[RMDB]
RNA sequence: GGGAACGACUCGAGUAGAGUCGAAAAUGUUUCCCAGCCAGGGAUUUUCGUCCUCGAGUUUCUUGAUGGUUCUCCUGCUCUUCCGGAGCUUUCUUUCGAGGUCUUCCGCGUCUUUUCUUGCUUGGAUUAGGCCCGUGAUUCGUCACGGGCAAAAGAAACAACAACAACAAC
Reactivity to 2A3 in 0.01 (KOAc 150mM, MgCl2 10mM, bicine 150mM(pH8.5), 24C), signal-to-noise 4, nucleotides 027 to 129: u100g030u010u080u030c020c000c000a000g040c040c030a030g000g010g020a050u030u000u020u060c020g020u030c000c020u000c000g000a000g000u040u090u000c080u090u140g090a120u170g080g000u050u010c040u020c030c050u020g040c000u000c000u040u010c070c080g010g000a040g030c000u010u060u020c000u030u060u020c020g040a030g020g040u010c000u060u000c010c000g030c030g020u000c020u000u070u040u030c000u030u080g070c050u000u050g080g000a060u020u080a090g080
Reactivity to DMS in 0.01 (KOAc 150mM, MgCl2 10mM, bicine 150mM(pH8.5), 24C), signal-to-noise 2, nucleotides 027 to 129: u000g010u090u040u030c000c000c000a140g040c000c070a040g000g000g000a000u020u020u070u000c070g030u020c090c040u000c020g000a000g000u000u030u040c050u040u030g050a120u030g010g100u030u000c020u000c010c120u040g040c000u030c000u020u080c050c070g050g100a110g010c080u000u000u000c000u000u060u010c110g030a070g010g000u020c090u000u000c000c040g010c210g000u020c030u020u010u000u050c020u000u060g040c100u080u050g000g000a000u010u050a090g000
Chemical mapping of a 170-nucleotide RNA with 2A3 and DMS. Conditions: 150 mM KOAc, 10 mM MgCl2 and 150 mM bicine (pH 8.5), 24 C. Reactivities are given for positions 27 through 129. 2A3 is a SHAPE reagent: it acylates the 2'-hydroxyl of flexible nucleotides of all four kinds.